[RMDB]
This 177-nucleotide RNA was probed chemically with 2A3 and DMS. Source: RMDB library OK2TST, as collected in RNAgym. The DMS profile rests on 1,969 reads. Values cover nucleotides 27 to 126.
RNA sequence: GGGAACGACUCGAGUAGAGUCGAAAACAACAGCUUGCUGGCAGUGCGCGACGACCUGCUGGAAGCGGCGAACGGCACCAAUACCGCCGACUCGCUCGCAAGCCUCGGCCAGGAUAUUGAGUCGCUAGAUAUUUUAGCCGUUCGCGGCUAAAAUAUCAAAAGAAACAACAACAACAAC
Reactivity to 2A3 in 0.01 (KOAc 150mM, MgCl2 10mM, bicine 150mM(pH8.5), 24C), signal-to-noise 2, nucleotides 027 to 126: c010a000a020c010a040g030c010u040u160g020c000u030g040g040c010a040g000u040g120c060g000c010g040a030c020g050a070c010c000u010g000c030u020g040g000a040a020g020c000g000g000c000g010a060a010c000g010g020c000a020c050c030a050a090u110a270c060c040g010c010c020g090a150c020u020c020g030c040u170c040g030c020a030a090g040c010c000u060c060g070g010c020c020a020g000g040a050u070a110u180u170g040a050g020u020c010g010c020u000a000
Reactivity to DMS in 0.01 (KOAc 150mM, MgCl2 10mM, bicine 150mM(pH8.5), 24C), signal-to-noise 3, nucleotides 027 to 126: c060a080a150c090a080g000c020u000u000g020c000u000g000g010c040a020g000u010g000c090g020c050g030a100c040g010a220c120c010u000g000c020u000g000g010a060a220g000c010g010g010c020g020a020a060c010g000g020c000a060c110c080a050a070u000a130c250c040g000c050c000g000a070c090u000c040g020c040u000c090g020c080a090a160g020c030c050u010c180g010g010c040c070a110g000g000a040u010a080u010u010g010a140g000u000c040g010c040u000a150
For DMS the reverse transcriptase was MarathonRT. The RNA was probed in 150 mM KOAc, 10 mM MgCl2 and 150 mM bicine (pH 8.5) at 24 C. 2A3 adducts were read by reverse transcription with SuperScript II with manganese.